[RMDB]
Chemical mapping of a 207-nucleotide RNA with 2A3. Conditions: 150 mM KOAc, 10 mM MgCl2 and 150 mM bicine (pH 8.5), 24 C. The data come from the RNA Mapping Database (RMDB), library ARCHII.
RNA sequence: GGGAACGACUCGAGUAGAGUCGAAAACUAGCCUGUUCAUGGGCUAGGCCGGGUCAAACCGGCAGUGAGUUAAUUCACAUGAAAUCGCGCUUGUCCGGGUCGCUUGGGCAGGUGCUAAAUCCAAGGCGGCUCGGCGAAAUCCAGCCUGUUCGGCGGGGAUCGUAUUAGACUUCGGUCUAAUACGAUCAAAAGAAACAACAACAACAAC
Reactivity to 2A3 in 0.01 (KOAc 150mM, MgCl2 10mM, bicine 150mM(pH8.5), 24C), signal-to-noise 3, nucleotides 027 to 156: c000u000a000g000c000c020u050g020u150u080c060a090u150g010g030g000c000u000a000g010g000c000c010g050g000g000u150c080a090a050a010c010c000g020g000c020a010g040u050g030a030g000u090u260a080a090u240u070c050a020c020a060u030g080a030a010a040u110c050g030c020g030c240u180u210g050u100c010c010g010g000g000u010c000g000c000u030u010g030g040g050c100a080g060g090u100g070c010u040a020a030a010u000c010c000a030a000g130g010c000g020g000c000u010c010g000g010c010g000a040a030a020u050c010c020a000g000c010c000u080g100u110u080c070g000g000c030g020g010g040